[RMDB]
RNA sequence: GGGAACGACUCGAGUAGAGUCGAAAAAGAACUGCGCGCAUUGAGAGUGCGUGAGGAAGGUGGCGUGUUUUUAAAGGAGCCGUCAACUUGGUCGUCUUGUACGUUGAACAGUCACGGUAUUAGCGAAAUACAACCCGAGACCGUAGGGUGUCCGGUCGAAACAGUCAUUGUUCGCAAUGACUGUUUCAAAAGAAACAACAACAACAAC
Reactivity to 2A3 in 0.01 (KOAc 150mM, MgCl2 10mM, bicine 150mM(pH8.5), 24C), signal-to-noise 5, nucleotides 027 to 156: a000g100a060a020c040u080g010c030g000c000g030c020a040u090u150g090a100g010a020g230u010g000c010g010u020g010a040g040g010a060a010g010g020u040g010g000c030g010u140g040u040u020u010u030u160a090a140a050g060g000a010g010c010c000g030u010c000a050a060c030u020u090g030g000u080c010g020u030c020u020u050g020u030a040c030g040u030u110g040a100a020c020a060g050u060c030a030c070g030g010u060a050u070u120a040g040c040g070a050a030a010u160a070c080a060a060c020c000c030g030a060g000a030c000c010g020u040a070g090g030g010u020g010u000c010c000g030g010u030c040
Reactivity to DMS in 0.01 (KOAc 150mM, MgCl2 10mM, bicine 150mM(pH8.5), 24C), signal-to-noise 2, nucleotides 027 to 156: a030g000a130a090c010u000g000c080g060c030g050c020a090u000u020g040a240g020a220g000u000g030c030g020u000g020a080g020g010a100a090g020g040u010g000g020c040g000u000g000u000u000u000u020u000a080a130a200g000g000a140g040c000c020g000u000c050a060a080c050u000u000g000g000u010c030g000u010c040u020u000g000u000a080c130g030u000u000g000a040a100c090a070g010u020c010a050c030g010g020u010a080u000u010a120g020c030g050a080a020a090u000a090c110a030a110c030c020c030g010a160g010a060c020c020g040u000a100g000g010g030u010g000u000c020c030g000g030u020c090
The data come from the RNA Mapping Database (RMDB), library OK3TST. The record gives the reactivity of an RNA of 207 nucleotides to 2A3 and DMS. For 2A3 the reverse transcriptase was SuperScript II with manganese. Conditions: 150 mM KOAc, 10 mM MgCl2 and 150 mM bicine (pH 8.5), 24 C. In probing experiments dimethyl sulfate is read out at A N1 and C N3, which are open when not base-paired. For DMS, 3,302 sequencing reads were counted. For DMS the reverse transcriptase was MarathonRT.